RNA sequence: GGGAACGACUCGAGUAGAGUCGAAAACACGGGCUCCUCGCCCCGGAGCAUCCCCGGAUUCGAGAUCGACGAGCUGGUGGUGCUCUCGUCCACCGGGGCCCUCAUGCUCAAGGAACUGCCGACGCGCCAUGCACUAUGCGUUCGCGCAUAGUGCAUGAAAAGAAACAACAACAACAAC
Reactivity to 2A3 in 0.01 (KOAc 150mM, MgCl2 10mM, bicine 150mM(pH8.5), 24C), signal-to-noise 1, nucleotides 027 to 126: c020a030c030g010g060g010c020u040c030c010u020c080g050c000c000c000c000g030g000a010g000c000a040u000c030c020c000c000g030g010a110u100u110c080g000a070g050a230u120c110g170a120c040g000a020g000c030u040g000g090u090g030g060u050g010c010u000c000u020c020g020u010c000c010a050c010c010g010g020g000g010c030c000c000u050c010a080u070g000c000u030c070a010a070g080g030a100a070c030u040g030c000c000g070a070c090g040c040g050c040
Reactivity to DMS in 0.01 (KOAc 150mM, MgCl2 10mM, bicine 150mM(pH8.5), 24C), signal-to-noise 2, nucleotides 027 to 126: c130a150c120g010g010g000c020u000c030c030u010c180g010c060c020c010c050g020g010a040g020c010a070u000c010c010c000c020g000g000a130u000u030c060g010a140g010a070u010c120g000a060c050g000a030g010c020u000g000g020u000g010g020u010g000c010u000c040u010c040g000u000c050c040a110c060c020g010g000g010g020c200c030c000u010c070a050u000g000c050u000c040a080a180g000g000a080a050c080u000g010c020c030g020a070c140g010c060g040c080
The record gives the reactivity of an RNA of 177 nucleotides to 2A3 and DMS. As a SHAPE reagent, 2A3 marks flexible, mostly unpaired nucleotides at the ribose 2'-OH. Reactivities are given for positions 27 through 126. The RNA was probed in 150 mM KOAc, 10 mM MgCl2 and 150 mM bicine (pH 8.5) at 24 C. 2A3 adducts were read by reverse transcription with SuperScript II with manganese.